[RMDB]
RNA sequence: GGGAACGACUCGAGUAGAGUCGAAAACGGUAGAUAAGUGUGGAUGGAGUGAGAGGAGGAGUCCUGUGUAUGUCGUUGUCAACGUCGACCGAGCGUCCGUGCCAAGCGCUGCGUCACCAGGGGAUGAGACUAUGAGCAUGUUCGCAUGCUCAUAGUCAAAAGAAACAACAACAACAAC
Reactivity to 2A3 in 0.01 (KOAc 150mM, MgCl2 10mM, bicine 150mM(pH8.5), 24C), signal-to-noise 1, nucleotides 027 to 126: c030g010g040u080a050g060a100u080a100a120g070u030g050u050g120g000a060u060g030g020a050g050u130g030a080g000a030g040g030a040g010g030a020g010u020c000c000u060g010u030g030u030a090u160g030u030c010g000u030u030g060u050c040a080a010c070g040u000c040g050a060c010c020g010a060g000c020g030u000c000c030g000u010g060c000c020a000a020g000c000g000c040u060g010c030g060u040c000a040c050c020a010g000g030g000g000a060u050g060a020
Reactivity to DMS in 0.01 (KOAc 150mM, MgCl2 10mM, bicine 150mM(pH8.5), 24C), signal-to-noise 2, nucleotides 027 to 126: c060g010g010u000a060g030a080u010a060a100g020u010g020u010g000g010a070u000g000g020a060g010u000g010a110g010a080g010g000a100g010g000a100g010u000c020c030u000g010u010g010u010a060u010g020u010c030g030u000u010g020u000c110a060a080c100g000u000c070g020a040c030c070g010a100g000c060g010u000c040c040g000u000g000c080c070a060a100g000c060g030c030u000g020c150g020u000c040a120c060c050a060g020g000g000g000a130u000g000a210